[RMDB]
RNA sequence: GGGAACGACUCGAGUAGAGUCGAAAAGAAAAGAGCGUAAUCGCGUCUUGACGUGAGUGAGACUAGACUGUAGGCUAUCCCAAGUGGGAUAGAAUAUCUCACAAUACGCUGAUCUACAGUCAAAAGAGGAUCCAGCAGGAUUCGUCCUGCUGGAUCCAAAAGAAACAACAACAACAAC
Reactivity to 2A3 in 0.01 (KOAc 150mM, MgCl2 10mM, bicine 150mM(pH8.5), 24C), signal-to-noise 2, nucleotides 027 to 126: g160a000a010a000a000g030a000g020c010g000u010a040a040u160c030g000c000g010u060c120u240u210g170a030c030g000u000g010a000g000u000g030a000g000a000c020u030a070g010a000c040u000g000u000a010g010g040c020u000a020u020c010c000c000a090a130g300u300g030g000g020a000u010a000g010a000a040u090a080u000c010u000c020a000c040a000a010u030a000c000g000c010u000g060a030u090c030u000a020c000a000g000u000c010a000a000a000a040g150a050

Conditions: 150 mM KOAc, 10 mM MgCl2 and 150 mM bicine (pH 8.5), 24 C. Chemical mapping of a 177-nucleotide RNA with 2A3. Values cover nucleotides 27 to 126. 2A3 adducts were read by reverse transcription with SuperScript II with manganese. It was measured as part of the RMDB library OK1LIB.